[RMDB]
RNA sequence: GGGAACGACUCGAGUAGAGUCGAAAAGGCGUAGCCGACAACAUGCCCAGGUAGCCCAGACCUUCAAGGCUACGGUGCGUUGCCACGCACGGUCUGAUUCUUCACAACGACGUUCACCGCGUCUUCUACAACCGGCAAAGAUUCGUCUUUGCCGGAACUCUUCUCUCUGAUUCGUCAGAGAGAAGAGAAAAGAAACAACAACAACAAC
Reactivity to DMS in 0.01 (KOAc 150mM, MgCl2 10mM, bicine 150mM(pH8.5), 24C), signal-to-noise 1, nucleotides 027 to 156: g040g010c020g110u000a140g020c040c000g050a200c040a110a100c050a060u000g020c000c000c080a090g000g000u000a050g000c020c020c090a140g060a100c080c100u020u000c070a060a260g000g000c010u000a020c010g010g030u000g050c040g010u000u030g010c140c080a100c010g000c030a050c010g010g030u000c010u000g000a140u020u020c060u010u010c020a090c050a080a130c050g020a030c030g010u000u010c010a070c050c030g010c030g000u000c010u000u000c020u010a060c050a020a120c020c020g000g030c000a010a010a040g000a090u020u000c280g020u010c000u000u000u010g030c000c000g030g000a000a010
Reactivity to 2A3 in 0.01 (KOAc 150mM, MgCl2 10mM, bicine 150mM(pH8.5), 24C), signal-to-noise 5, nucleotides 027 to 156: g060g000c130g070u130a030g030c030c020g090a040c040a090a030c020a070u170g030c010c010c030a040g040g020u010a000g010c000c050c120a020g020a020c010c010u040u040c040a010a000g000g000c000u010a010c010g010g000u020g000c010g010u050u220g110c080c110a020c010g030c000a000c010g010g000u030c000u020g030a060u110u080c090u150u160c090a040c050a240a070c110g010a000c000g080u190u190c100a040c130c010g010c000g020u010c000u040u030c030u070a100c030a140a100c010c000g010g000c000a010a000a000g000a010u080u140c190g020u000c120u000u000u020g000c000c000g000g000a000a000